[RMDB]
RNA sequence: GGGAACGACUCGAGUAGAGUCGAAAAGAUAUGGAGGGUAAUGAUGGGAGGUUACUGUCGGAAACGACAGAAUAACCGAGGAUCAUUUACCCUCCUAAGUCAAAACUUGAACCUUCGGGUUCAAGAAGUAUACGUGAUGGUUCGCCAUCACGUAUACAAAAGAAACAACAACAACAAC
Reactivity to 2A3 in 0.01 (KOAc 150mM, MgCl2 10mM, bicine 150mM(pH8.5), 24C), signal-to-noise 3, nucleotides 027 to 126: g020a000u050a030u120g000g010a000g000g020g010u030a030a000u040g090a040u130g210g230g010a220g040g010u000u000a020c000u010g020u010c000g010g000a060a050a000c010g010a000c000a010g060a110a270u090a020a000c010c010g020a050g070g250a010u010c000a000u040u080u020a010c000c000c000u010c000c000u000a000a000g000u000c000a010a010a040a100c000u020u010g000a010a000c000c000u050u050c300g180g000g000u000u000c010a000a000g010a030a000
Reactivity to DMS in 0.01 (KOAc 150mM, MgCl2 10mM, bicine 150mM(pH8.5), 24C), signal-to-noise 3, nucleotides 027 to 126: g000a030u010a300u000g000g000a020g020g000g010u000a010a020u000g010a020u010g030g000g030a300g000g000u000u000a030c000u000g000u000c000g000g000a040a100a230c000g000a020c010a010g010a150a070u010a020a050c000c000g040a300g010g000a020u000c030a020u020u010u000a000c010c000c000u000c000c010u000a000a080g000u000c020a050a070a090a140c020u000u000g010a020a000c000c000u010u010c160g010g010g030u000u000c000a010a000g010a070a070